[RMDB]
Structure probing data (2A3 and DMS) for a 177-nucleotide construct.
The data come from the RNA Mapping Database (RMDB), library RFMREP.
The DMS profile rests on 2,416 reads.
The reactions ran in a buffer of 150 mM KOAc, 10 mM MgCl2 and 150 mM bicine (pH 8.5), at 24 C.

RNA sequence: GGGAACGACUCGAGUAGAGUCGAAAAUUGGUCCUACUCCCCAAGAGGCCAAAUCCCCAGGGAGCUCAUGCUGUGGGGCUUUGAGCAAGCUCAUUACUGGCGCCAUUACUGCCCCGGUCGUCAUGUACACAUAUACCGUGUUCGCACGGUAUAUGUGAAAAGAAACAACAACAACAAC
Reactivity to 2A3 in 0.01 (KOAc 150mM, MgCl2 10mM, bicine 150mM(pH8.5), 24C), signal-to-noise 2, nucleotides 027 to 126: u010u010g010g000u080c040c010u060a070c030u060c000c030c010c010a010a000g060a120g010g000c020c000a050a020a000u020c010c010c010c000a020g040g070g040a030g000c000u010c070a060u130g000c060u080g030u210g100g060g020g030c010u150u060u150g040a030g000c040a030a040g050c000u030c040a050u120u240a080c060u040g030g000c000g030c050c010a050u130u210a140c050u110g000c020c000c010c000g030g030u080c020g020u020c000a050u170g050u090a020
Reactivity to DMS in 0.01 (KOAc 150mM, MgCl2 10mM, bicine 150mM(pH8.5), 24C), signal-to-noise 2, nucleotides 027 to 126: u010u000g010g010u010c020c030u000a060c100u010c030c020c010c040a100a090g000a150g010g000c000c000a030a050a140u010c030c000c000c090a090g000g010g010a110g020c040u010c080a060u000g000c050u000g050u000g020g020g000g020c040u000u000u010g000a100g020c030a060a070g000c040u000c050a100u000u000a070c060u000g000g000c030g010c010c030a120u000u000a060c110u000g010c020c010c040c050g010g000u000c050g020u000c050a060u000g020u030a150